[RMDB]
RNA sequence: GGGAACGACUCGAGUAGAGUCGAAAACGGCCACCGGCGCUUGCAGUCGUGUCGUCAUGCCGCCGCCCGGCAGUCGAUGCCCGGCUGAGGCGGGGGUGGCGGAAGUGCGGCCAUCGUCGGCGAGCUGGCGUCUGCCUAGAUUCGUCUAGGCAGACGCAAAAGAAACAACAACAACAAC
Reactivity to 2A3 in 0.01 (KOAc 150mM, MgCl2 10mM, bicine 150mM(pH8.5), 24C), signal-to-noise 2, nucleotides 027 to 126: c010g000g000c000c020a010c000c000g010g050c000g030c090u010u070g060c090a050g020u010c010g010u040g140u080c000g050u040c000a070u170g220c010c030g100c020c010g050c000c000c010g040g230c010a030g030u050c010g040a090u170g180c070c180c060g010g000c000u050g000a060g080g000c000g010g010g020g010g020u020g000g010c060g020g010a070a010g090u060g060c000g000g010c000c000a010u010c000g020u010c000g000g000c020g020a080g000c020u060g070
An RNA of 177 nucleotides, treated with 2A3 and read out base by base.
The RNA was probed in 150 mM KOAc, 10 mM MgCl2 and 150 mM bicine (pH 8.5) at 24 C.
The 2A3 profile rests on 1,678 reads.
Source: RMDB library OK1LIB, as collected in RNAgym.